[RMDB]
RNA sequence: GGGAACGACUCGAGUAGAGUCGAAAAGCCUCCUCGCUUCCAUAGAAAGGGGACGGGGCAGAUGGCAAGUGCUACAACCGAGCGGUGGUAUCUGUCAAACUAAGCAGCCACUGCACAUCAAUUGACUAAACGAUGCCGAUCUUCGGAUCGGCAUCAACGAUAAGAAAUAGUUCGCUAUUUCUUAUCGAAAAGAAACAACAACAACAAC
Reactivity to DMS in 0.01 (KOAc 150mM, MgCl2 10mM, bicine 150mM(pH8.5), 24C), signal-to-noise 1, nucleotides 027 to 156: g050c000c000u010c000c020u000c000g020c030u000u060c030c020a150u000a190g010a060a130a110g010g000g000g030a010c040g000g000g020g010c170a060g020a160u000g020g000c050a110a130g040u000g030c020u020a060c000a120a130c010c070g010a220g000c010g030g140u000g030g020u010a100u000c050u030g000u000c070a110a110a200c140u000a140a180g010c030a140g000c030c000a000c010u000g000c020a090c040a120u010c060a040a040u000u000g020a210c060u010a050a100a200c120g010a000u000g010c000c000g000a050u000c020u000u000c300g030g020a000u010c010g010g000c020a010u010c000a000a070
Reactivity to 2A3 in 0.01 (KOAc 150mM, MgCl2 10mM, bicine 150mM(pH8.5), 24C), signal-to-noise 5, nucleotides 027 to 156: g010c000c000u010c010c000u010c020g020c080u060u000c020c010a080u070a160g230a050a150a060g020g020g010g020a010c020g000g000g010g000c040a050g040a150u110g010g030c050a090a070g070u060g100c030u060a130c050a110a060c040c060g070a030g020c010g000g010u000g000g020u050a150u120c020u010g110u100c030a090a110a150c140u180a120a070g010c000a000g010c020c000a010c010u010g050c010a020c020a060u130c060a080a210u130u180g050a090c050u140a020a100a060c070g000a000u000g000c000c000g010a010u010c040u010u030c170g080g000a000u000c000g000g000c000a000u000c000a000a000

This 207-nucleotide RNA was probed chemically with DMS and 2A3. The data come from the RNA Mapping Database (RMDB), library M2RFPK. For DMS, 1,941 sequencing reads were counted. For DMS the reverse transcriptase was MarathonRT.